[RMDB]
RNA sequence: GGGAACGACUCGAGUAGAGUCGAAAAUCCUUCUUUCCAAGUAUUCCUUUGAUAUUUCCCAGCCAGGGAUUAUCUUCCUCUAGUUUCUUGAUCUUCUUCUUGACCUUUUGGAGUUCCCUUUCGAGAUCUUCCUGUUUUCUUCUUCCAUUGACCCACUCUAAACGUAAUUCUUCGGAAUUACGUUUAGAAAAGAAACAACAACAACAAC
Reactivity to 2A3 in 0.01 (KOAc 150mM, MgCl2 10mM, bicine 150mM(pH8.5), 24C), signal-to-noise 3, nucleotides 027 to 156: u010c010c000u030u100c040u140u100u030c020c020a040a030g020u030a050u050u150c000c000u080u100u160g060a060u080a110u100u170u070c030c000c020a060g090c120c070a050g040g010g010a000u050u070a020u030c020u060u050c000c000u020c040u030a050g020u040u130u000c040u080u130g070a090u030c020u040u000c010u010u010c000u000u070g060a110c020c000u090u100u040u160g040g010a040g020u030u040c040c020c020u020u060u090c090g060a100g040a120u030c020u040u040c000c010u020g020u040u090u020u010c010u040u000c010u040u030c020c000a060u000u120g090a060c020c000c020a020c030u000